[RMDB]
RNA sequence: GGGAACGACUCGAGUAGAGUCGAAAAGGAUCACGAGGGGGAGACCCCGGCAACCUGGGACGGACACCCAAGGUGCUCACACCGGAGACGGUGGAUCCGGCCCGAGAGGGCAACGAAGGUCCGAACAAUUUUAGUGACGGUUCGCCGUCACUAAAAUAAAAGAAACAACAACAACAAC
Reactivity to DMS in 0.01 (KOAc 150mM, MgCl2 10mM, bicine 150mM(pH8.5), 24C), signal-to-noise 2, nucleotides 027 to 126: g000g010a000u010c010a130c180g010a130g000g000g010g010g040a270g020a220c000c000c030c010g010g000c030a010a030c000c020u000g000g020g030a080c000g010g010a020c040a160c020c000c000a080a050g010g000u020g010c020u010c110a300c100a050c010c000g030g020a230g000a230c050g020g000u010g020g000a080u000c020c020g010g030c000c000c000g000a180g010a240g000g000g020c040a060a060c220g010a120a110g030g000u000c030c000g040a280a110c230a070